[RMDB]
RNA sequence: GGGAACGACUCGAGUAGAGUCGAAAAGAAGCCGCAAAACCCGAUUGGAGGAACUGUUAUGAAUACCGUAUCGAAUUACCUGUCCGCAUUGCGCGAAGCCAUGAAGGCGCAAGGCUUGGACGCGCUCAAUUAGCCUCAUAUUCGUAUGAGGCUAAUUAAAAGAAACAACAACAACAAC
Reactivity to DMS in 0.01 (KOAc 150mM, MgCl2 10mM, bicine 150mM(pH8.5), 24C), signal-to-noise 6, nucleotides 027 to 126: g020a150a150g010c040c020g020c060a060a030a080a110c040c020c010g010a110u020u020g010g020a070g000g000a080a070c050u000g010u000u010a100u020g000a090a080u030a080c070c050g010u010a060u020c050g010a080a080u010u020a060c040c030u020g010u000c020c000g000c050a060u010u010g000c010g010c020g010a090a080g000c080c070a060u020g010a070a110g010g010c020g000c030a050a050g000g020c020u000u010g010g010a090c020g000c080g010c050u020c120
Reactivity to 2A3 in 0.01 (KOAc 150mM, MgCl2 10mM, bicine 150mM(pH8.5), 24C), signal-to-noise 7, nucleotides 027 to 126: g030a010a010g050c030c030g010c070a070a080a040a120c020c000c010g060a090u020u200g040g030a090g030g040a090a060c020u080g080u200u120a140u210g090a100a050u090a120c040c030g020u050a080u120c030g030a050a060u100u030a130c010c000u050g010u020c010c010g020c060a040u020u080g000c000g000c020g070a060a020g040c020c010a070u130g100a110a080g100g000c010g000c020a020a020g020g010c010u060u080g010g000a010c010g020c010g020c040u040c020

Chemical mapping of a 177-nucleotide RNA with DMS and 2A3. Conditions: 150 mM KOAc, 10 mM MgCl2 and 150 mM bicine (pH 8.5), 24 C. The DMS profile rests on 16,422 reads. The 2A3 profile rests on 6,362 reads. For DMS the reverse transcriptase was MarathonRT.